[RMDB]
RNA sequence: GGGAACGACUCGAGUAGAGUCGAAAAGCAGAUGGGGUGUGUCAGGACACUGAAUCUCGUAGGUAGUCAUCUUCCUGACAAGAUGUCCUAGCUAUUGACGAGAGUCAAUAGCUAACUACCGUCGUACGAGAGUAUGACAGACACAUAUAUCUGAGGACACUUCAAUGUUCUUCGGAACAUUGAAGUGAAAAGAAACAACAACAACAAC
Reactivity to 2A3 in 0.01 (KOAc 150mM, MgCl2 10mM, bicine 150mM(pH8.5), 24C), signal-to-noise 5, nucleotides 027 to 156: g060c020a000g010a010u030g010g030g090g060u010g000u000g000u020c030a060g070g090a100c070a060c160u110g070a080a090u010c000u000c000g010u020a060g000g010u010a000g010u030c000a010u010c010u050u040c060c130u130g070a080c060a000a000g010a000u040g060u080c050c080u030a000g000c000u000a000u010u000g000a000c010g030a010g000a010g120u000c000a000a000u000a000g000c000u000a000a000c000u000a000c000c020g100u140c090g050u050a000c000g000a000g010a010g030u090a080u070g040a060c020a040g010a010c000a000c020a020u020a000u010a010u020c030u010g030a070g100g040a010
Reactivity to DMS in 0.01 (KOAc 150mM, MgCl2 10mM, bicine 150mM(pH8.5), 24C), signal-to-noise 3, nucleotides 027 to 156: g010c040a010g010a040u010g010g010g010g100u000g020u000g020u000c000a100g030g010a240c050a140c070u010g000a110a110u000c000u000c000g020u000a060g000g020u000a040g000u000c010a040u010c000u010u000c010c030u030g010a080c030a010a040g000a040u010g020u030c200c130u000a020g010c000u000a000u000u010g000a020c000g030a300g000a300g010u000c000a000a020u000a010g010c010u000a000a060c000u000a030c030c000g040u000c200g050u000a010c000g020a080g000a060g050u000a040u010g010a140c020a200g010a040c020a020c050a050u000a120u000a050u000c010u010g000a100g010g020a290